RNA sequence: GGGAACGACUCGAGUAGAGUCGAAAAACAGCCAAAUCAGUUACAACAACCAAGAUCUAUUGUCUCUUCGUUGUCUCGAUUUAUGUUAGUAAACAUCAGAACUUUGGUCUCAUGAGAGGUCUUGGCACAUGCCCAGUCUUUUCGAAGACUGGGCAUGAAAAGAAACAACAACAACAAC
Reactivity to 2A3 in 0.01 (KOAc 150mM, MgCl2 10mM, bicine 150mM(pH8.5), 24C), signal-to-noise 2, nucleotides 027 to 126: a050c000a010g030c030c000a000a000a030u120c020a030g060u060u050a050c030a090a000c010a010a010c010c050a020a000g000a030u030c080u130a130u160u280g120u070c000u000c030u130u140c040g010u020u030g050u080c010u050c050g080a090u020u120u000a100u140g060u030u050a040g110u140a070a110a070c030a040u100c050a050g020a160a060c000u140u010u000g010g010u000c040u020c070a100u130g020a050g000a030g200g000u010c000u040u000g040g000c040a060
Reactivity to DMS in 0.01 (KOAc 150mM, MgCl2 10mM, bicine 150mM(pH8.5), 24C), signal-to-noise 2, nucleotides 027 to 126: a080c170a210g000c010c040a000a080a050u010c120a110g010u010u000a070c130a050a030c050a120a130c040c070a010a030g000a020u000c040u000a120u030u000g010u000c010u000c030u000u000c180g000u000u000g010u000c030u000c090g010a060u000u010u000a020u010g020u010u010a100g020u010a050a050a020c020a080u000c140a080g020a060a050c090u010u020u000g000g000u000c050u000c050a070u010g010a110g020a040g020g000u000c000u000u000g010g010c200a100
This 177-nucleotide RNA was probed chemically with 2A3 and DMS. Conditions: 150 mM KOAc, 10 mM MgCl2 and 150 mM bicine (pH 8.5), 24 C. Source: RMDB library OK2TST, as collected in RNAgym. For 2A3 the reverse transcriptase was SuperScript II with manganese.